[RMDB]
RNA sequence: GGGAACGACUCGAGUAGAGUCGAAAAGGUGGUAGUGGAUUCUUAACGACCUACCGUGUCACGACGCGUGUAGAAGACCGGAUUCGCGUGGACAAGAGGUGGGCCAGGUACGCGACCGGUGAUUACCCAUCGUGCCUAAGUUCGCUUAGGCACGAUGAAAAGAAACAACAACAACAAC
Reactivity to DMS in 0.01 (KOAc 150mM, MgCl2 10mM, bicine 150mM(pH8.5), 24C), signal-to-noise 3, nucleotides 027 to 126: g020g040u000g010g010u000a050g030u020g010g000a120u000u000c050u000u000a080a160c130g000a110c110c000u000a030c000c010g000u030g040u010c100a120c300g000a080c050g010c050g000u000g000u000a040g010a110a120g000a030c040c010g000g000a190u020u010c020g040c000g040u010g020g000a110c100a080a090g010a100g010g010u000g000g000g000c040c060a060g010g000u010a050c020g000c030g010a040c010c020g000g000u000g000a040u000u000a100c050c060
Reactivity to 2A3 in 0.01 (KOAc 150mM, MgCl2 10mM, bicine 150mM(pH8.5), 24C), signal-to-noise 3, nucleotides 027 to 126: g110g020u080g040g040u070a050g060u050g050g110a160u130u060c020u080u120a110a060c040g080a060c010c000u010a010c000c060g010u000g000u010c080a040c170g130a020c010g060c030g010u180g000u080a040g020a220a020g030a030c000c000g000g040a070u100u070c020g000c000g030u020g080g000a060c090a160a040g020a030g050g100u120g040g050g020c020c020a060g060g000u050a020c000g000c000g000a000c000c000g030g000u000g000a060u040u090a060c010c030